[RMDB]
RNA sequence: GGGAACGACUCGAGUAGAGUCGAAAAGUGUAGCAUAAGUGGGAGCGAAAGCGCCAGUGAAAUACCACUACCUUUAUCGUCUUUUUACUUAUUCAAUGAAGCGAAGCUGGGAUUAAUGUCUCACUUUUCUACAAAAGGUAUUCGUACCUUUUGUAGAAAAAGAAACAACAACAACAAC
Reactivity to DMS in 0.01 (KOAc 150mM, MgCl2 10mM, bicine 150mM(pH8.5), 24C), signal-to-noise 3, nucleotides 027 to 126: g020u000g020u000a090g000c050a060u000a020a030g010u010g000g000g000a050g020c020g030a060a080a050g020c140g000c120c030a030g030u010g000a080a090a110u020a100c180c030a060c020u000a110c060c010u000u010u010a070u020c030g020u010c010u010u000u000u010u030a070c070u000u040a030u010u020c120a040a090u010g000a040a050g010c080g000a070a140g010c070u010g000g010g010a120u020u020a050a100u000g000u000c010u000c020a070c080u000u000u000
Reactivity to 2A3 in 0.01 (KOAc 150mM, MgCl2 10mM, bicine 150mM(pH8.5), 24C), signal-to-noise 9, nucleotides 027 to 126: g090u100g060u080a020g000c040a020u010a080a020g020u020g030g020g010a030g020c010g050a050a020a000g080c110g040c100c080a020g010u020g070a110a160a040u200a080c050c010a010c010u020a030c010c000u040u040u080a160u080c030g120u190c020u040u090u050u050u140a050c020u040u030a030u070u100c050a080a160u170g090a100a010g030c020g050a030a010g010c020u050g010g000g020a010u040u150a110a060u170g030u010c010u010c020a030c000u030u010u000
Structure probing data (DMS and 2A3) for a 177-nucleotide construct.
The RNA was probed in 150 mM KOAc, 10 mM MgCl2 and 150 mM bicine (pH 8.5) at 24 C.
The data come from the RNA Mapping Database (RMDB), libraries RFM100 and RFMREP.
Reactivities are given for positions 27 through 126.